[RMDB]
RNA sequence: GGGAACGACUCGAGUAGAGUCGAAAAGUGUUCUGUGGACAUUCAGAUACAAUAUUUUAUGUCAACAUAUGUUUUUAUUGUUUUGGGUAUAUACCUCGGAGUAGAAUUGCAGGAUAAUGUAAUAACUCUAUAUUUAGCCUUUUGAGUAACUGUCAGACUCACGUUACCGAUUCGUCGGUAACGUGAGAAAAGAAACAACAACAACAAC
Reactivity to 2A3 in 0.01 (KOAc 150mM, MgCl2 10mM, bicine 150mM(pH8.5), 24C), signal-to-noise 1, nucleotides 027 to 156: g050u060g010u010u110c040u040g030u070g010g000a070c000a080u010u130c020a110g050a030u070a090c020a110a000u050a050u060u240u120u060a080u070g000u010c010a020a000c000a070u110a020u090g050u060u200u000u130u080a030u070u080g060u030u000u030u060g080g000g000u040a110u020a010u070a170c000c080u030c030g010g000a060g010u080a040g050a110a120u020u010g000c010a040g000g030a090u070a280a070u140g000u010a000a030u050a120a040c000u000c050u070a010u010a080u220u020u030a080g000c030c040u100u030u050u020g050a030g030u060a090a030c090u040g090u140c000a000g060a160

This 207-nucleotide RNA was probed chemically with 2A3. 2A3 is a SHAPE reagent: it acylates the 2'-hydroxyl of flexible nucleotides of all four kinds.